This 207-nucleotide RNA was probed chemically with 2A3 and DMS. The data come from the RNA Mapping Database (RMDB), library VIROID. Conditions: 150 mM KOAc, 10 mM MgCl2 and 150 mM bicine (pH 8.5), 24 C. For 2A3, 1,586 sequencing reads were counted. Values cover nucleotides 27 to 156.
[RMDB]
RNA sequence: GGGAACGACUCGAGUAGAGUCGAAAAUUGGUUCCGAGGGGGGUGUGAUCCAAACCUGCCGUAGAAACUGGAUUACGACGUCUACCCGGGAUUCAAACCCGGUCCCCUCCAGAAGUGAUUCUGGAUGAAGAGUCUGUGCUAAGCACACUGACGAGUCCGGUGUUAUACAGUUCGCUGUAUAACACCGAAAAGAAACAACAACAACAAC
Reactivity to 2A3 in 0.01 (KOAc 150mM, MgCl2 10mM, bicine 150mM(pH8.5), 24C), signal-to-noise 2, nucleotides 027 to 156: u050u030g010g010u030u000c020c020g030a160g000g030g030g000g000g000u000g040u070g040a050u060c060c000a090a050a090c010c040u110g170c040c020g050u090a020g050a060a090a040c040u020g020g000a000u010u010a030c110g010a010c040g170u010c020u050a140c010c000c000g010g010g020a080u300u290c170a090a060a160c000c030c000g030g000u060c010c010c010c000u000c000c010a040g010a050a000g040u080g070a060u030u000c000u000g000g000a030u060g040a050a030g070a010g020u000c070u070g040u040g000c020u080a090a070g020c010a000c000a000c050u040g050a010c040g020a000g060u050c060
Reactivity to DMS in 0.01 (KOAc 150mM, MgCl2 10mM, bicine 150mM(pH8.5), 24C), signal-to-noise 2, nucleotides 027 to 156: u000u010g010g020u000u000c020c010g020a270g020g020g030g000g030g010u000g010u000g000a140u000c060c060a030a110a070c020c010u000g050c060c100g010u000a180g020a060a130a090c140u000g020g020a080u020u000a180c010g030a050c010g030u020c050u000a110c030c000c020g010g000g000a180u000u000c200a090a070a190c100c030c020g000g010u000c020c000c000c040u000c000c000a020g030a050a020g030u010g010a300u010u000c000u000g010g020a060u000g010a080a170g020a220g050u020c000u000g010u020g000c020u000a170a230g000c060a060c010a040c040u000g020a050c050g020a150g020u010c060